The record gives the reactivity of an RNA of 177 nucleotides to 2A3.
[RMDB]
RNA sequence: GGGAACGACUCGAGUAGAGUCGAAAAGCGGACAGAAGUGGGAGAUCGAAGACCACUUCAACGAUUUCAAAGAAACCGACGUCAGCACGGUCAGGAUGUAGGUCCGCAUGCAUCCAAGUUGACGAAAGGCAUCGAUGUACUUCGGUACAUCGAUGCCAAAAGAAACAACAACAACAAC
Reactivity to 2A3 in 0.01 (KOAc 150mM, MgCl2 10mM, bicine 150mM(pH8.5), 24C), signal-to-noise 1, nucleotides 027 to 126: g000c000g030g000a020c040a020g020a000a000g000u060g000g010g000a150g080a200u300c070g200a050a010g110a120c000c000a000c000u000u000c000a000a010c010g050a080u000u000u300c110a050a170a000g170a010a120a000c000c000g000a000c000g010u000c000a000g000c000a030c140g000g060u030c010a040g000g000a000u000g000u000a000g020g020u000c040c010g000c000a000u000g020c000a000u000c020c040a010a020g000u000u000g000a010c010g030a030a000a040
The RNA was probed in 150 mM KOAc, 10 mM MgCl2 and 150 mM bicine (pH 8.5) at 24 C. For 2A3, 936 sequencing reads were counted. For 2A3 the reverse transcriptase was SuperScript II with manganese.